[RMDB]
RNA sequence: GGGAACGACUCGAGUAGAGUCGAAAAAUACGGUAAUGUGAGUGGGUCUGCUUCGCCUACAUCAAUCAUUACUUUCUCAGCUGAAGCAACGGUAACAAACUGCUCAAAUGACUCUGCUUCGCCUGUAUGCACGGUGAUAACUAGCUGAUCCACAUCCAAAUUGUGCAGGGUUCGCCCUGCACAAUUUAAAAGAAACAACAACAACAAC
Reactivity to 2A3 in 0.01 (KOAc 150mM, MgCl2 10mM, bicine 150mM(pH8.5), 24C), signal-to-noise 1, nucleotides 027 to 156: a010u050a010c150g030g020u060a090a080u110g100u090g020a060g030u080g000g030g000u010c020u140g020c030u060u010c160g000c000c000u030a040c000a180u080c070a040a100u100c000a000u050u000a030c000u000u100u010c000u000c000a000g000c000u070g050a050a000g000c000a020a080c030g060g070u110a100a050c110a130a070a060c130u070g000c020u080c170a050a140a140u080g070a140c000u000c050u090g000c000u020u000c030g030c000c000u020g070u180a110u110g040c020a010c220g000g000u000g010a030u090a240a120c130u080a020g020c000u020g000a000u000c020c000a000c010a110u060c120c050

The record gives the reactivity of an RNA of 207 nucleotides to 2A3. Reactivities are given for positions 27 through 156. As a SHAPE reagent, 2A3 marks flexible, mostly unpaired nucleotides at the ribose 2'-OH. Values are in units of 0.01, from 0 to 300, in steps of 10.